This 177-nucleotide RNA was probed chemically with 2A3 and DMS. The reactions ran in a buffer of 150 mM KOAc, 10 mM MgCl2 and 150 mM bicine (pH 8.5), at 24 C. As a SHAPE reagent, 2A3 marks flexible, mostly unpaired nucleotides at the ribose 2'-OH. The data come from the RNA Mapping Database (RMDB), library TTRINS.

[RMDB]
RNA sequence: GGGAACGACUCGAGUAGAGUCGAAAAGAUAUGGAGAACCUCGAACGAGGAUCGUCAGUGACGUAACAUCACAUCGGAAACGAUGUGUGGUCACUGACGGGAGUUCACGCGAGGUUCUCCUAAGUCACCUAUAGGACUAGUUCGCUAGUCCUAUAGGAAAAGAAACAACAACAACAAC
Reactivity to 2A3 in 0.01 (KOAc 150mM, MgCl2 10mM, bicine 150mM(pH8.5), 24C), signal-to-noise 5, nucleotides 027 to 126: g010a010u070a040u130g000g000a010g010a000a000c000c010u010c020g060a230a120c060g030a200g100g040a090u280c000g000u000c000a000g000u000g010a000c070g140u240a210a060c070a240u300c020a020c010a010u000c010g040g050a080a070a050c020g010a010u000g000u000g000u010g000g000u000c010a000c010u000g020a000c010g000g010g000a060g010u050u040c040a020c130g140c040g030a000g000g010u000u000c000u000c000c000u000a000a000g000u000c010a030
Reactivity to DMS in 0.01 (KOAc 150mM, MgCl2 10mM, bicine 150mM(pH8.5), 24C), signal-to-noise 6, nucleotides 027 to 126: g020a040u000a300u010g000g020a030g020a010a010c000c010u000c010g000a100a150c100g010a120g020g010a100u000c010g010u000c000a010g010u000g020a020c010g010u010a090a180c220a060u010c010a010c000a010u000c000g000g000a150a110a260c020g000a000u000g030u000g020u000g010g000u000c000a000c000u000g000a010c000g000g000g020a210g020u000u010c010a120c180g000c060g010a020g010g010u000u000c000u000c000c000u000a010a060g000u000c040a200